[RMDB]
RNA sequence: GGGAACGACUCGAGUAGAGUCGAAAAUAAAAGUCGAAAGUAUUGCUAUAGUUAAGGUUGCGCUUGCCUAUUUAGGCAUACUCCUCAGGAUGGCGCGUUGCAGUCCAACAAGAUCCAGGGACUGUACAAAACAGGCUCGUGUUCGCACGAGCCUGAACCCCCUAUUUUACUUCGGUAAAAUAGGGGGAAAAGAAACAACAACAACAAC
Reactivity to 2A3 in 0.01 (KOAc 150mM, MgCl2 10mM, bicine 150mM(pH8.5), 24C), signal-to-noise 2, nucleotides 027 to 156: u090a030a070a000a010g080u090c050g060a100a060a020g070u080a050u110u190g050c030u090a020u100a110g050u060u080a100a050g030g030u080u110g000c020g000c050u040u120g010c000c010u050a200u140u250u260a030g000g000c000a000u010a090c010u050c000c050u070c060a020g010g080a090u050g000g000c010g000c000g010u020u030g000c010a000g010u000c000c010a030a030c020a140a070g040a130u060c060c080a000g010g000g010a010c000u000g000u000a040c060a000a090a060a030c020a000g010g000c010u000c000g040u000g010u020u050c040g020c090a000c000g000a000g020c000c000u000g000a000a000
Reactivity to DMS in 0.01 (KOAc 150mM, MgCl2 10mM, bicine 150mM(pH8.5), 24C), signal-to-noise 1, nucleotides 027 to 156: u000a080a140a140a100g020u000c020g040a100a140a130g040u020a010u000u000g020c000u000a130u000a120g000u000u000a080a040g000g010u000u010g040c000g020c040u010u010g010c000c000u020a210u010u010u020a030g020g060c010a050u000a000c080u000c050c000u010c050a130g000g010a080u000g010g040c000g050c050g040u000u010g000c010a070g000u000c020c000a100a160c030a080a150g010a080u000c040c080a200g000g000g010a040c000u000g060u010a100c110a040a060a110a210c020a010g010g010c010u000c020g040u000g030u010u000c300g050c000a000c000g000a010g000c030c000u010g000a010a070
Chemical mapping of a 207-nucleotide RNA with 2A3 and DMS. The RNA was probed in 150 mM KOAc, 10 mM MgCl2 and 150 mM bicine (pH 8.5) at 24 C. High DMS reactivity at an A or C suggests that its Watson-Crick edge is free. For 2A3, 901 sequencing reads were counted.